[RMDB]
RNA sequence: GGGAACGACUCGAGUAGAGUCGAAAAUUCGGUAAGGCAUACCUUACCCGAAACCGCGUUGAUCGAGAGGCGAGAUGCUGACGUCACAGGCGGAAGUGGCCACCGAACGGCCACAGCGGUACCUGGCGCAACUGUGCGAGCACUUCGCGCACAAGGCGAUCAACAAAUGGUUCGCCAUUUGUUGAUCAAAAGAAACAACAACAACAAC
Reactivity to 2A3 in 0.01 (KOAc 150mM, MgCl2 10mM, bicine 150mM(pH8.5), 24C), signal-to-noise 4, nucleotides 027 to 156: u090u010c000g000g000u010a010a020g020g040c120a090u160a300c050c010u020u000a030c010c010c010g040a060a010a020c020c020g050c030g060u040u030g070a120u090c090g040a060g050a090g240g000c050g020a070g000a060u070g010c010u040g070a110c020g070u150c000a020c030a050g100g000c020g130g010a070a090g020u010g000g000c000c020a070c020c110g150a050a110c100g000g010c010c000a000c000a000g000c030g030g050u110a140c030c050u080g080g040c020g000c030a040a160c020u030g000u020g000c000g010a010g010c020a040c030u100u100c060g000c000g040c030a010c030a050a030g070g000c040
Reactivity to DMS in 0.01 (KOAc 150mM, MgCl2 10mM, bicine 150mM(pH8.5), 24C), signal-to-noise 2, nucleotides 027 to 156: u020u010c000g030g040u010a000a040g020g000c100a240u000a030c050c000u010u000a010c020c000c070g000a100a080a160c030c020g030c230g030u000u020g000a110u000c100g030a100g010a270g010g000c070g020a080g020a060u000g050c050u010g010a120c040g010u000c040a070c020a100g030g020c070g000g010a120a180g050u000g020g000c010c030a100c020c190g040a090a300c080g010g010c010c010a010c010a040g000c090g000g000u020a030c030c030u010g000g000c010g040c010a060a090c020u000g050u000g050c040g010a110g060c050a080c090u000u010c020g020c020g090c080a030c000a030a120g020g020c170